[RMDB]
Chemical mapping of a 177-nucleotide RNA with 2A3 and DMS. For 2A3 the reverse transcriptase was SuperScript II with manganese. It was measured as part of the RMDB library TTRINS. For DMS, 5,752 sequencing reads were counted. Reactivities are given for positions 27 through 126. For 2A3, 9,164 sequencing reads were counted.
RNA sequence: GGGAACGACUCGAGUAGAGUCGAAAAGAUAUGGACCCAUGAACUACCGUUCGCACACCUAGCCGAAGAACUCUUUCGGAAACGAAAGAGGGAGGCUACGUGUGCGAACGGCAUGGGUCCUAAGUCACUACAUUACCUUCUUCGGAAGGUAAUGUAGAAAAGAAACAACAACAACAAC
Reactivity to 2A3 in 0.01 (KOAc 150mM, MgCl2 10mM, bicine 150mM(pH8.5), 24C), signal-to-noise 2, nucleotides 027 to 126: g060a010u110a050u210g000g020a000c000c000c030a020u020g020a060a150c230u300a090c300c010g000u000u020c000g000c000a000c000a000c020c040u000a000g020c010c010g300a300a050g000a060a030c000u000c000u040u010u010c010g050g000a120a090a030c010g000a020a000a010g000a000g020g000g000a030g000g000c000u000a010c010g000u000g020u000g000c000g000a000a000c000g000g000c000a000u000g000g000g020u000c000c000u000a000a010g000u000c010a000
Reactivity to DMS in 0.01 (KOAc 150mM, MgCl2 10mM, bicine 150mM(pH8.5), 24C), signal-to-noise 4, nucleotides 027 to 126: g000a020u000a300u010g000g000a020c000c000c000a010u000g000a080a050c080u010a300c030c000g000u000u000c000g010c010a010c010a010c000c070u000a010g030c000c000g010a120a200g010a110a290c000u000c000u000u000u000c000g000g000a080a080a240c010g000a010a010a020g000a040g000g010g000a060g010g030c010u000a000c260g020u000g010u000g010c000g000a000a000c010g000g000c010a010u000g000g010g000u000c000c000u010a000a050g010u010c040a230